Source: RMDB library M2PK50, as collected in RNAgym. Structure probing data (2A3 and DMS) for a 177-nucleotide construct. The DMS profile rests on 1,322 reads.
[RMDB]
RNA sequence: GGGAACGACUCGAGUAGAGUCGAAAAACGAUGUCGUUCGCGACAUCGUAAAUUGUAUAACCUUGCUUGAAGUCUACUUGGUUGUAAAGCGAGACAAGUCACUGAGAGUCCUAUUCGUAGGACUCAAGUUUAUCCGCCAAUUCGUUGGCGGAUAAACAAAAGAAACAACAACAACAAC
Reactivity to 2A3 in 0.01 (KOAc 150mM, MgCl2 10mM, bicine 150mM(pH8.5), 24C), signal-to-noise 1, nucleotides 027 to 126: a000c000g000a010u000g010u010c000g000u080u000c170g000c000g060a000c010a000u000c000g000u020a030a030a000u110u070g050u010a130u020a080a020c010c000u000u010g000c020u020u010g060a020a010g020u000c040u040a070c100u300u220g040g030u120u080g030u070a010a010a010g060c010g000a040g000a030c050a140a040g110u120c040a010c140u150g080a100g010a000g300u000c000c000u000a020u010u050c200g060u040a000g020g010a020c010u000c000a000a010
Reactivity to DMS in 0.01 (KOAc 150mM, MgCl2 10mM, bicine 150mM(pH8.5), 24C), signal-to-noise 2, nucleotides 027 to 126: a040c000g010a020u000g010u000c000g010u000u020c280g020c020g040a020c000a000u000c000g010u000a020a070a080u000u000g020u000a090u000a100a110c120c030u010u000g010c030u000u010g000a130a160g010u010c020u010a110c140u000u000g000g010u000u010g030u000a010a010a030g000c060g000a060g000a200c040a040a070g000u000c110a050c140u010g000a180g000a020g020u000c000c000u000a020u000u010c180g050u000a020g000g000a020c000u000c000a030a050